[RMDB]
RNA sequence: GGGAACGACUCGAGUAGAGUCGAAAAGCUAUCGCCAGCAUUUCAUCACGCAGAUCCGGCGGGGUGAUUUCGUCGGCAUCGGGUGUAUAGACCCAGGCAUGUCUGAACUCGAUUUCGGUUAAUCCAAUAUUUUACCUAUCUUCGGAUAGGUAAAAUAAAAAGAAACAACAACAACAAC
Reactivity to 2A3 in 0.01 (KOAc 150mM, MgCl2 10mM, bicine 150mM(pH8.5), 24C), signal-to-noise 4, nucleotides 027 to 126: g010c010u040a030u200c080g000c010c010a010g020c020a030u000u050u040c020a040u010c000a000c030g000c010a020g050a300u080c070c150g060g010c000g000g000g020g000u060g030a070u020u040u080c080g020u010c040g000g020c010a020u060c030g010g030g000u040g020u020a140u060a100g090a010c010c010c010a010g090g020c070a070u140g020u000c030u040g060a040a010c010u010c020g060a070u070u060u060c030g030g040u050u070a090a040u060c000c000a030a040
Reactivity to DMS in 0.01 (KOAc 150mM, MgCl2 10mM, bicine 150mM(pH8.5), 24C), signal-to-noise 6, nucleotides 027 to 126: g000c040u000a060u000c120g010c020c020a070g020c050a060u000u000u000c030a030u000c020a050c020g010c050a110g000a110u000c140c150g010g000c010g010g000g010g030u010g010a060u000u010u000c080g030u000c040g000g020c070a060u000c060g000g010g010u000g010u010a110u010a080g010a050c030c030c050a130g010g010c080a070u000g010u000c010u000g010a130a050c030u000c020g010a080u000u000u000c070g000g010u010u000a070a180u000c010c020a080a190
Overview:
Source: RMDB library OK2TST, as collected in RNAgym. The record gives the reactivity of an RNA of 177 nucleotides to 2A3 and DMS. The reactions ran in a buffer of 150 mM KOAc, 10 mM MgCl2 and 150 mM bicine (pH 8.5), at 24 C. For 2A3, 4,271 sequencing reads were counted. Values are in units of 0.01, from 0 to 300, in steps of 10.